[RMDB]
RNA sequence: GGGAACGACUCGAGUAGAGUCGAAAAUAUCCUUAGUUCCAAAACCGCUCCAAUGACUUCCUUUUUAUUGAUUUUUCCUUUUCUUUCCUUGGUUUAGUUUAUUUAUGAUAAGUUAUUGCAAGAAAGGCUUUAGAUAACUGUUCGCAGUUAUCUAAAGAAAAGAAACAACAACAACAAC
Reactivity to DMS in 0.01 (KOAc 150mM, MgCl2 10mM, bicine 150mM(pH8.5), 24C), signal-to-noise 4, nucleotides 027 to 126: u030a080u010c010c010u000u010a120g010u000u010c020c030a070a050a130a120c100c060g010c030u000c010c020a060a090u010g000a070c050u000u000c030c000u000u010u010u010u030a110u060u010g000a120u010u000u010u000u000c010c010u000u010u010u010c010u010u000u000c080c010u000u000g010g000u000u000u000a030g010u000u000u010a020u010u010u040a060u060g000a050u000a020a040g000u010u000a030u000u000g010c030a040a040g000a040a050a040g000g000
Reactivity to 2A3 in 0.01 (KOAc 150mM, MgCl2 10mM, bicine 150mM(pH8.5), 24C), signal-to-noise 7, nucleotides 027 to 126: u130a020u020c010c000u030u040a040g020u050u040c040c000a010a030a070a110c030c010g030c020u000c020c020a060a080u070g030a070c020u030u050c020c000u050u060u050u060u080a130u080u110g060a080u050u060u040u030u060c000c000u060u090u050u070c010u010u040u040c030c010u050u040g180g000u200u040u010a020g010u040u020u010a080u050u110u040a150u250g050a030u020a050a020g010u030u020a020u030u070g050c020a020a010g000a070a050a000g050g000